Notes: Chemical mapping of a 207-nucleotide RNA with 2A3 and DMS. The DMS profile rests on 2,315 reads. The reactions ran in a buffer of 150 mM KOAc, 10 mM MgCl2 and 150 mM bicine (pH 8.5), at 24 C.
RNA sequence: GGGAACGACUCGAGUAGAGUCGAAAAACUAAUCCAAAGCAAGUAUAGGAGAACAGGUUUUGAACUAUUUUUAGGCAGAUAAAAAAUAGUAUUUGACAGUCUAACACUAACUGAACAAUAAGUGUUAAAAACUCCCUCCUGUUCGCAGGAGGGAGAACAUAAUCCACUCGUUCGCGAGUGGAUUAUGAAAAGAAACAACAACAACAAC
Reactivity to 2A3 in 0.01 (KOAc 150mM, MgCl2 10mM, bicine 150mM(pH8.5), 24C), signal-to-noise 4, nucleotides 027 to 156: a000c050u090a090a020u020c020c010a040a010a020g000c010a030a010g010u050a020u070a120g010g020a030g010a100a050c110a140g040g050u030u030u050u040g030a040a000c000u000a010u020u010u010u010u030a020g050g070c070a050g050a150u160a050a060a010a000a010a000u020a010g020u010a060u030u020u040g030a020c000a000g000u010c000u000a000a000c000a000c000u000a010a000c000u000g030a020a000c010a010a010u020a030a000g000u000g000u000u010a050a070a010a000a000c000u000c000c010c000u000c010c000u000g030u040u100c270g000c070a000g000g000a000g000g000g000a000g000a000a000
Reactivity to DMS in 0.01 (KOAc 150mM, MgCl2 10mM, bicine 150mM(pH8.5), 24C), signal-to-noise 1, nucleotides 027 to 156: a030c030u000a070a260u000c060c010a000a000a300g030c030a090a080g010u000a070u010a160g020g020a040g030a100a130c070a050g060g000u000u000u000u010g000a140a050c000u000a000u000u000u000u000u000a060g040g010c080a140g000a080u020a000a000a030a020a010a050u000a060g050u000a080u000u010u000g020a190c000a010g020u000c000u000a020a060c020a010c000u000a040a130c020u000g030a120a090c210a080a050u000a040a010g030u010g000u000u010a090a040a040a160a080c000u040c010c020c000u000c010c000u000g000u000u030c300g000c010a030g010g010a010g000g020g000a000g000a040a040